[RMDB]
RNA sequence: GGGAACGACUCGAGUAGAGUCGAAAAUGAAGGUGGCAGCGUGUGUGGCCUUUAUUCUGAACUGUUUCUACAAGCAUCAGGAGCGGUUACCAGAAGUCAAUCAGCGGGUGGACGAAUGUGAUUUGGCGGUGAUCGCUCUGCGGCGCUACUACCGGCACGAUUUAAUACCGUUCGCGGUAUUAAAUCGAAAAGAAACAACAACAACAAC
Reactivity to 2A3 in 0.01 (KOAc 150mM, MgCl2 10mM, bicine 150mM(pH8.5), 24C), signal-to-noise 3, nucleotides 027 to 156: u090g020a030a030g030g010u060g040g070c050a050g020c100g070u160g030u030g010u100g140g020c010c000u010u080u030a100u130u030c100u060g020a050a030c010u020g020u020u050u040c040u030a100c040a170a060g030c010a090u120c050a070g060g000a010g010c020g000g000u000u000a010c010c000a050g070a280a020g040u000c010a010a020u030c000a010g090c020g080g020g060u150g020g050a090c050g060a090a060u190g020u020g090a020u090u080u080g060g010c090g020g000u000g000a010u010c010g000c020u020c000u010g000c010g040g010c050g020c000u050a060c030u010a030c010c050g050g000c050a010